[RMDB]
RNA sequence: GGGAACGACUCGAGUAGAGUCGAAAACGGUGGUCUCUCCCUGGGAGACGACUCCGACACCGAUGGCGUGCGCGACGUACCCACCCAGCUCGGUGUCCGGGAUGAGGGUGGCGGGGAUCCGCAGUGUGCGCUCCAUGCACACCAGCGUACCCGUGGGCUAGUCGAUCUAAUUCGUUAGAUCGACUAGAAAAGAAACAACAACAACAAC
Reactivity to 2A3 in 0.01 (KOAc 150mM, MgCl2 10mM, bicine 150mM(pH8.5), 24C), signal-to-noise 3, nucleotides 027 to 156: c040g030g080u140g080g000u010c010u000c000u030c050c010c100u140g040g030g010a000g030a010c030g030a050c030u000c020c020g020a020c010a020c010c000g020a020u020g030g050c140g020u090g030c090g020c070g130a120c150g130u270a200c010c010c000a030c000c010c000a070g070c080u010c020g010g000u050g030u060c030c080g030g010g000a020u100g050a110g000g030g020u070g040g000c020g010g010g000g040a080u070c070c010g010c000a010g020u000g010u000g000c020g000c020u040c040c040a100u300g000c040a000c000a000c020c020a000g000c000g000u030a030c000c000c020g000u060g010g000g050
Reactivity to DMS in 0.01 (KOAc 150mM, MgCl2 10mM, bicine 150mM(pH8.5), 24C), signal-to-noise 2, nucleotides 027 to 156: c030g010g000u000g000g000u000c010u010c030u000c000c080c140u020g030g040g000a090g030a010c000g020a030c020u000c060c000g010a070c020a040c010c020g000a050u010g040g020c070g030u000g020c050g040c050g030a130c100g000u000a100c070c000c000a040c010c010c010a300g020c070u000c020g000g050u010g000u000c010c030g030g010g000a100u000g010a110g010g020g030u000g010g020c080g010g010g000g000a090u000c120c030g070c030a150g010u010g030u000g010c020g010c240u000c150c150a150u000g000c000a010c010a020c000c010a090g000c010g010u000a050c000c000c000g000u000g000g010g030

Overview: Structure probing data (2A3 and DMS) for a 207-nucleotide construct. For DMS, 4,535 sequencing reads were counted. High DMS reactivity at an A or C suggests that its Watson-Crick edge is free. The data come from the RNA Mapping Database (RMDB), library OK3TST. High 2A3 reactivity points to a flexible backbone, as in loops and unpaired stretches. Conditions: 150 mM KOAc, 10 mM MgCl2 and 150 mM bicine (pH 8.5), 24 C.